[RMDB]
RNA sequence: GGGAACGACUCGAGUAGAGUCGAAAAUCGCAGGCGGCCCACCGCUGCUCGUCGGCGUCGAGGUCAGUGAGGAACGCAAAUCGCUUCCGAACGCGAGCUUCCCAGGCAGCCAUAGCGACAGGACGGGCUACUGGCUAGCAUUCGUGCUAGCCAGUAGAAAAGAAACAACAACAACAAC
Reactivity to DMS in 0.01 (KOAc 150mM, MgCl2 10mM, bicine 150mM(pH8.5), 24C), signal-to-noise 3, nucleotides 027 to 126: u020c050g050c040a080g000g010c060g020g000c010c010c040a180c120c040g020c020u000g010c010u000c080g010u000c020g010g030c030g030u000c080g000a100g020g010u010c000a100g000u000g000a290g010g000a050a020c220g020c030a080a080a140u010c200g000c030u000u010c010c020g000a180a070c100g010c030g000a050g000c120u000u000c010c020c020a160g000g000c040a070g030c010c040a100u010a080g020c030g000a090c090a070g000g000a030c050g000g010g000
Reactivity to 2A3 in 0.01 (KOAc 150mM, MgCl2 10mM, bicine 150mM(pH8.5), 24C), signal-to-noise 2, nucleotides 027 to 126: u030c010g000c060a050g110g020c020g000g040c030c010c020a030c030c020g010c020u000g020c000u060c080g190u020c000g000g040c020g030u050c050g030a080g010g000u060c080a050g030u010g030a020g000g010a020a050c060g000c050a070a110a300u140c100g000c040u050u000c020c050g020a030a010c040g000c020g030a000g000c050u000u000c010c030c010a000g100g030c030a000g060c010c040a160u130a140g050c010g070a050c050a040g090g050a000c040g000g000g000
Background
Conditions: 150 mM KOAc, 10 mM MgCl2 and 150 mM bicine (pH 8.5), 24 C. An RNA of 177 nucleotides, treated with DMS and 2A3 and read out base by base. For 2A3 the reverse transcriptase was SuperScript II with manganese. The data come from the RNA Mapping Database (RMDB), library OK2TST. The 2A3 profile rests on 1,785 reads.